[RMDB]
RNA sequence: GGGAACGACUCGAGUAGAGUCGAAAAGAGAGAGACGCUUGGAUGGCAGCAGCAGGCCUGAGCAACAGCUGACAGCAGGCAGGGGACAAGCUGUGCCUGCAGCCACAGCACCAACGGCAGAGAAGGGGAAAUGGUGCACAUUCGUGUGCACCAUUUCAAAAGAAACAACAACAACAAC
Reactivity to 2A3 in 0.01 (KOAc 150mM, MgCl2 10mM, bicine 150mM(pH8.5), 24C), signal-to-noise 3, nucleotides 027 to 126: g090a000g020a000g010a000g010a030c030g020c070u080u050g030g050a080u050g080g000c040a050g000c010a000g020c000a020g070g030c010c040u090g020a030g000c030a000a090c010a050g000c010u020g020a040c000a030g010c000a020g070g000c010a010g000g040g010g040a040c030a030a060g060c000u040g020u070g070c000c010u000g020c010a000g040c040c020a030c010a020g020c000a020c010c020a040a030c000g020g000c030a020g020a000g020a100a030g050g010g010
Reactivity to DMS in 0.01 (KOAc 150mM, MgCl2 10mM, bicine 150mM(pH8.5), 24C), signal-to-noise 3, nucleotides 027 to 126: g000a080g020a080g000a110g020a090c060g000c050u020u010g010g000a080u030g010g000c060a050g000c110a090g000c040a050g020g010c010c060u000g000a150g010c130a120a080c140a030g050c040u000g010a090c110a130g020c040a020g010g020c010a100g020g000g010g040a130c150a120a070g030c000u000g020u000g020c040c000u010g000c030a030g000c030c000a170c070a010g000c000a080c100c110a070a030c110g030g000c050a050g000a080g000a030a030g020g020g000

The record gives the reactivity of an RNA of 177 nucleotides to 2A3 and DMS.
The reactions ran in a buffer of 150 mM KOAc, 10 mM MgCl2 and 150 mM bicine (pH 8.5), at 24 C.
It was measured as part of the RMDB library RFM100.
For 2A3 the reverse transcriptase was SuperScript II with manganese.